[RMDB]
RNA sequence: GGGAACGACUCGAGUAGAGUCGAAAAGCAAAUUUGCAAGCAUUGUUGAACCGUAUAAUAUUCAUUAUUGCUAAAGAAACGGUUACCACUCCUUUACAGUUAACUUCCGAUCUCUCAAUUUCUUCUGUACCAUCUAUUCACAUAAAUGAUUCAUAUAACCAUAGUACGGCUUCGGCCGUACUAUGGUAAAAGAAACAACAACAACAAC
Reactivity to 2A3 in 0.01 (KOAc 150mM, MgCl2 10mM, bicine 150mM(pH8.5), 24C), signal-to-noise 2, nucleotides 027 to 156: g050c010a010a120a130u210u150u090g010c060a060a000g050c070a120u010u220g030u030u090g010a000a010c000c010g030u050a100u030a160a040u070a140u140u120c050a050u070u230a040u090u200g060c000u170a110a060a080g070a090a100a000c010g030g000u010u000a030c010c020a000c060u040c000c030u040u040u110a030c000a050g000u040u050a120a030c000u110u030c000c000g080a090u030c020u030c010u020c050a040a180u020u050u030c050u020u000c030u050g000u030a100c060c000a070u070c070u070a100u090u120c070a030c000a060u160a060a150a050u130g100a090u130u060c040a040u070a010u070a200